[RMDB]
RNA sequence: GGGAACGACUCGAGUAGAGUCGAAAAAGCCACCUGUGGUAUAAUACCGAAGAGAGAGGUGGCACGGAUAUGGACGUCGUAAGUCUUUCAACACUUGCAAGCGAUAGAGAGAAAACGGUCUCCUAUCGGCUAAACGGUAUUUCGAUACCGUUUAGCCAAAAGAAACAACAACAACAAC
Reactivity to 2A3 in 0.01 (KOAc 150mM, MgCl2 10mM, bicine 150mM(pH8.5), 24C), signal-to-noise 1, nucleotides 027 to 126: a000g000c010c000a000c020c000u100g050u240g180g030u080a160u030a300a180u120a130c030c030g090a260a050g090a020g030a010g000a000g090g010u000g000g000c000a000c040g060g000a020u080a110u260g040g030a030c040g030u050c020g020u070a030a060g010u080c000u040u050u060c090a060a010c040a030c030u080u200g130c100a130a010g130c000g080a050u040a130g090a000g000a000g000a030a030a050a000c050g090g040u000c010u030c000c000u010a040u050c050
Reactivity to DMS in 0.01 (KOAc 150mM, MgCl2 10mM, bicine 150mM(pH8.5), 24C), signal-to-noise 1, nucleotides 027 to 126: a170g000c000c000a000c000c010u000g000u010g000g040u000a040u030a160a140u000a070c020c010g000a130a130g020a290g010a110g000a070g000g000u000g010g050c010a100c120g000g000a050u000a010u010g010g000a050c140g010u000c080g000u000a160a150g000u020c000u000u000u000c040a090a060c230a020c070u010u010g040c290a210a090g020c030g000a040u000a030g010a070g010a060g010a040a080a040a000c150g000g000u000c070u000c000c000u000a010u000c020